[RMDB]
RNA sequence: GGGAACGACUCGAGUAGAGUCGAAAAACAAAGCAUGGCUAGAAGAUGCCACCGCGGAUAGAGCUGAGGUACUCUAGACUUCUAGCCAGAAGAAUUCCCAAACCGCGGAGAGUGCUGUCGCAAAAAAUCACUCUAAUACUUUCGAGUAUUAGAGUGAAAAAGAAACAACAACAACAAC
Reactivity to 2A3 in 0.01 (KOAc 150mM, MgCl2 10mM, bicine 150mM(pH8.5), 24C), signal-to-noise 1, nucleotides 027 to 126: a000c060a010a100a020g100c020a030u010g010g000c000u010a000g000a000a010g050a080u110g100c060c020a030c000c010g020c020g020g000a060u120a130g110a020g030c100u180g100a070g090g080u040a030c010u010c010u020a050g050a130c000u020u000c000u000a000g000c010c010a000g000a010a000g010a000a060u020u020c020c000c000a000a040a020c000c000g000c010g040g000a020g020a010g020u050g000c030u080g100u180c080g010c070a030a060a000a000a000a120
Reactivity to DMS in 0.01 (KOAc 150mM, MgCl2 10mM, bicine 150mM(pH8.5), 24C), signal-to-noise 5, nucleotides 027 to 126: a100c130a090a090a100g030c060a180u000g000g000c010u000a020g010a020a020g010a210u000g000c110c110a150c020c010g020c010g000g020a230u010a020g000a040g000c050u020g010a160g000g000u010a060c010u000c010u000a090g010a110c010u010u000c000u000a020g010c000c010a020g000a040a180g000a080a140u000u000c000c000c000a060a110a120c030c020g010c010g020g000a090g000a080g030u000g000c010u000g010u010c110g000c070a000a010a040a060a080a060

Chemical mapping of a 177-nucleotide RNA with 2A3 and DMS. For 2A3, 6,824 sequencing reads were counted. For 2A3 the reverse transcriptase was SuperScript II with manganese. The data come from the RNA Mapping Database (RMDB), library M2PK90. Reactivities are given for positions 27 through 126. DMS adducts were read by reverse transcription with MarathonRT.